[RMDB]
RNA sequence: GGGAACGACUCGAGUAGAGUCGAAAAGAGCCUGCUCCAAAGGCUCUUUCGUUGAUUAUGUGUGCCAGAACAACGCCAUAGGUAUCAUUCUUCGUCUUCUUAGGCGCGGAACAUCUAAAUAUGGCUAUUCACUGCAGCAAUUCGUUGCUGCAGUGAAAAAAGAAACAACAACAACAAC
Reactivity to DMS in 0.01 (KOAc 150mM, MgCl2 10mM, bicine 150mM(pH8.5), 24C), signal-to-noise 2, nucleotides 027 to 126: g010a000g020c010c000u030g010c130u030c200c240a160a140a060g020g000c000u000c000u000u000u000c050g000u010u010g000a070u030u000a100u040g000u000g020u000g000c080c050a050g000a190a050c140a080a040c140g000c000c000a030u000a020g010g000u000a050u000c200a200u000u020c080u010u010c040g030u000c000u000u030c290u010u010a000g130g010c010g000c080g010g000a000a050c190a040u030c120u010a000a030a200u000a040u000g000g000c020u000a050
Reactivity to 2A3 in 0.01 (KOAc 150mM, MgCl2 10mM, bicine 150mM(pH8.5), 24C), signal-to-noise 1, nucleotides 027 to 126: g000a010g000c060c000u050g010c080u130c020c000a090a000a110g030g040c040u040c000u000u000u000c070g000u000u080g000a070u020u220a140u120g110u000g030u080g050c000c160a140g060a090a000c020a050a020c020g030c000c000a070u070a090g000g070u210a020u110c000a050u000u000c040u060u000c000g110u060c040u130u050c080u190u300a020g010g000c000g000c000g000g000a000a020c000a000u000c020u130a000a120a110u140a070u060g010g000c000u000a000
Notes:
The record gives the reactivity of an RNA of 177 nucleotides to DMS and 2A3. It was measured as part of the RMDB libraries RFM100 and RFMREP. For 2A3, 353 sequencing reads were counted.